The record gives the reactivity of an RNA of 207 nucleotides to DMS and 2A3. Values cover nucleotides 27 to 156. The RNA was probed in 150 mM KOAc, 10 mM MgCl2 and 150 mM bicine (pH 8.5) at 24 C.
[RMDB]
RNA sequence: GGGAACGACUCGAGUAGAGUCGAAAACGCUGGGUGAUACUGUAGCGGGAGCUUACUGAAGCGCGCACGGUAAGCGAAGAACGCUACCAGUCACCUGUGCUGAAGCGCGCACGGCAACCGAAAGGUGCGAAUCACGAUGAGGUUCGCCUCAUCGUAACUAUAUGAAAAGCUUCGGCUUUUCAUAUAGAAAAGAAACAACAACAACAAC
Reactivity to DMS in 0.01 (KOAc 150mM, MgCl2 10mM, bicine 150mM(pH8.5), 24C), signal-to-noise 3, nucleotides 027 to 156: c050g000c020u000g010g000g030u000g000a100u000a050c130u000g010u000a040g030c000g030g020g010a190g010c000u000u000a010c020u010g000a070a040g060c030g070c020g000c020a300c030g030g020u000a020a030g030c010g010a100a190g020a080a160c010g020c010u000a040c020c100a200g010u000c010a010c010c040u010g010u010g000c000u000g010a090a060g030c000g020c000g000c020a300c040g000g020c020a110a130c030c020g010a100a120a210g000g040u010g000c000g000a150a160u000c060a020c000g000a030u000g000a030g010g010u000u000c300g020c020c000u000c000a000u000c000g030u010a020a060
Reactivity to 2A3 in 0.01 (KOAc 150mM, MgCl2 10mM, bicine 150mM(pH8.5), 24C), signal-to-noise 8, nucleotides 027 to 156: c030g010c010u040g000g000g020u010g020a110u120a240c050u110g010u010a000g000c010g010g010g020a020g010c000u000u000a000c000u040g050a200a110g010c000g000c000g000c010a010c000g000g010u000a000a000g010c020g060a160a020g040a050a000c000g000c000u010a010c020c030a030g070u040c010a000c010c000u010g010u010g000c010u020g020a150a050g000c010g000c000g000c000a010c000g010g000c010a010a020c010c000g070a080a040a020g020g000u020g010c020g040a040a080u170c070a040c010g000a010u000g000a000g040g040u070u150c260g130c050c000u000c000a000u000c000g000u000a000a020